The record gives the reactivity of an RNA of 177 nucleotides to DMS and 2A3. For 2A3 the reverse transcriptase was SuperScript II with manganese. For DMS the reverse transcriptase was MarathonRT. Conditions: 150 mM KOAc, 10 mM MgCl2 and 150 mM bicine (pH 8.5), 24 C. Reactivities are rounded to 0.1 and cut off at 0 and 3.
RNA sequence: GGGAACGACUCGAGUAGAGUCGAAAAGAUGACCGGUUCGCCGGUCAUCAAAUAGGGAAACGGCGUGCGCGGCACCGUCCGCGGAAGAAACGGAAAAUAAAAAAACGCUAACCUUCGGGUUAGCGAAGAUUAGAUCACUCUUCGGAGUGAUCUAAUCAAAAGAAACAACAACAACAAC
Reactivity to DMS in 0.01 (KOAc 150mM, MgCl2 10mM, bicine 150mM(pH8.5), 24C), signal-to-noise 2, nucleotides 027 to 126: g030a020u000g010a000c010c000g010g010u000u000c200g050c010c000g000g000u000c000a010u000c000a010a040a070u020a130g010g030g010a070a060a070c080g020g020c140g030u010g010c030g030c020g010g020c000a080c040c060g010u010c030c020g010c030g010g010a070a080g010a030a030a010c020g010g000a070a070a070a070u010a020a010a110a060a080a140a110c020g000c000u000a000a000c000c000u000u000c230g030g000g020u000u000a000g030c000g000a020a010
Reactivity to 2A3 in 0.01 (KOAc 150mM, MgCl2 10mM, bicine 150mM(pH8.5), 24C), signal-to-noise 1, nucleotides 027 to 126: g020a010u010g010a000c000c000g000g020u010u030c170g020c040c000g020g000u000c000a000u000c000a010a000a000u040a000g010g000g010a030a070a030c030g040g020c070g020u130g030c030g020c000g010g000c050a040c120c010g100u070c000c000g030c000g010g140a060a020g070a000a040a010c030g050g050a050a050a080a020u270a040a120a070a000a000a000a010c010g000c010u000a000a000c000c010u040u040c210g090g000g000u000u010a000g020c000g000a000a000